About this RNA:
An RNA of 177 nucleotides, treated with DMS and read out base by base. Values cover nucleotides 27 to 126. Source: RMDB library OK2TST, as collected in RNAgym. DMS adducts were read by reverse transcription with MarathonRT. The reactions ran in a buffer of 150 mM KOAc, 10 mM MgCl2 and 150 mM bicine (pH 8.5), at 24 C.

[RMDB]
RNA sequence: GGGAACGACUCGAGUAGAGUCGAAAACUGGUGAAUCUACUACUACUAUCAAGAAUGGUAAGAAGAUGGCUGACCUUGAGUACUUCUGUAUGGGUGAAAGAGGAGACCAGUAUAGAAAGAUGGGUUACAUCCCCAGUCCUUUCGAGGACUGGGGAUGAAAAGAAACAACAACAACAAC
Reactivity to DMS in 0.01 (KOAc 150mM, MgCl2 10mM, bicine 150mM(pH8.5), 24C), signal-to-noise 1, nucleotides 027 to 126: c040u010g010g000u000g000a180a100u000c010u010a120c030u000a070c080u030a040c040u030a050u000c080a060a110g010a150a080u000g000g000u000a010a050g030a140a030g010a050u000g010g020c130u000g030a040c090c010u020u020g000a060g000u010a080c150u020u010c030u050g000u000a110u000g000g020g010u010g010a080a060a190g020a060g010g000a190g030a050c020c070a040g000u010a030u000a040g000a080a030a100g000a070u000g020g000g040u000u000a180